Notes:
Chemical mapping of a 177-nucleotide RNA with DMS and 2A3. For 2A3 the reverse transcriptase was SuperScript II with manganese. DMS adducts were read by reverse transcription with MarathonRT. The data come from the RNA Mapping Database (RMDB), library OK1LIB. The reactions ran in a buffer of 150 mM KOAc, 10 mM MgCl2 and 150 mM bicine (pH 8.5), at 24 C. Reactivities are given for positions 27 through 126. The 2A3 profile rests on 1,375 reads.
[RMDB]
RNA sequence: GGGAACGACUCGAGUAGAGUCGAAAACUUGACCAGUCUUCUCGCCUAUUUGCGACGAAUACUGCGUCGUCAGGAUAUACUUGUCGGGUAGAUAUGUCAGGACAUGAACUCCUUGGCGGGUAGCAAACCAUGCUCGUACUUUCGAGUACGAGCAUGGAAAAGAAACAACAACAACAAC
Reactivity to DMS in 0.01 (KOAc 150mM, MgCl2 10mM, bicine 150mM(pH8.5), 24C), signal-to-noise 1, nucleotides 027 to 126: c030u000u090g000a040c010c000a050g000u010c000u020u000c000u000c080g000c020c300u030a180u020u060u020g000c000g060a000c130g010a000a080u000a070c060u000g010c010g000u000c010g010u010c010a130g000g050a060u010a150u030a090c030u000u000g010u030c020g000g000g000u010a060g000a200u000a110u000g070u000c050a230g010g030a080c020a010u000g000a050a050c100u000c000c000u000u000g040g030c000g020g010g000u000a060g000c180a190a170a070
Reactivity to 2A3 in 0.01 (KOAc 150mM, MgCl2 10mM, bicine 150mM(pH8.5), 24C), signal-to-noise 2, nucleotides 027 to 126: c020u080u060g010a040c000c000a030g000u010c000u000u000c000u000c000g030c000c010u180a150u210u140u260g000c010g010a000c080g010a000a040u140a030c030u050g030c070g050u000c000g000u010c000a020g000g080a040u080a010u000a250c050u030u100g010u000c000g000g000g090u150a030g090a160u120a060u230g120u110c080a060g030g160a040c000a000u040g040a010a050c000u000c000c000u000u060g020g010c090g000g000g010u010a000g010c000a010a020a060